Structure probing data (DMS and 2A3) for a 207-nucleotide construct. The RNA was probed in 150 mM KOAc, 10 mM MgCl2 and 150 mM bicine (pH 8.5) at 24 C. It was measured as part of the RMDB library VIROID. The DMS profile rests on 2,864 reads. Reactivities are given for positions 27 through 156. For 2A3 the reverse transcriptase was SuperScript II with manganese.
[RMDB]
RNA sequence: GGGAACGACUCGAGUAGAGUCGAAAACCUACGAAGGCAACGUACGGUGUUGAGGCCCUGUCCGCCGCUGCGCUGCCACCUACUCUCGCGCCGCUAGUCGAGCGGACUCCGGGUGGAGCCCCCUGUUCUCUUAAACUAAUGUACUUUGACGCAGCGGGAUAUCUCAUAUGUUCGCAUAUGAGAUAUCAAAAGAAACAACAACAACAAC
Reactivity to DMS in 0.01 (KOAc 150mM, MgCl2 10mM, bicine 150mM(pH8.5), 24C), signal-to-noise 1, nucleotides 027 to 156: c010c020u000a120c080g010a140a110g010g000c020a100a090c050g000u000a070c100g020g010u000g000u000u000g000a140g020g060c020c050c070u000g020u000c110c110g010c020c010g050c000u000g020c030g030c010u000g000c040c040a080c050c020u010a110c060u000c030u010c040g010c080g020c020c020g010c070u000a090g010u010c100g000a200g020c020g000g040a000c030u010c040c010g050g040g030u000g000g010a200g000c030c000c010c010c040u000g000u010u000c020u010c030u000u020a130a080a190c140u010a120a130u010g000u000a080c070u000u010u010g000a050c070g050c020a040g030c020g030g020
Reactivity to 2A3 in 0.01 (KOAc 150mM, MgCl2 10mM, bicine 150mM(pH8.5), 24C), signal-to-noise 4, nucleotides 027 to 156: c000c000u000a010c050g090a140a070g090g000c050a030a030c050g010u050a030c110g010g070u070g060u070u150g030a090g060g000c010c000c040u050g050u070c050c070g020c000c000g000c040u000g000c010g030c030u090g130c000c000a020c000c000u060a110c010u040c010u050c110g120c110g040c120c000g020c040u070a040g160u220c090g110a010g000c010g030g020a050c020u030c110c080g010g000g030u050g000g020a030g020c000c000c000c010c000u010g040u070u010c040u020c000u080u220a080a070a030c050u050a130a060u130g040u140a090c020u140u140u080g020a030c020g000c020a000g010c020g010g000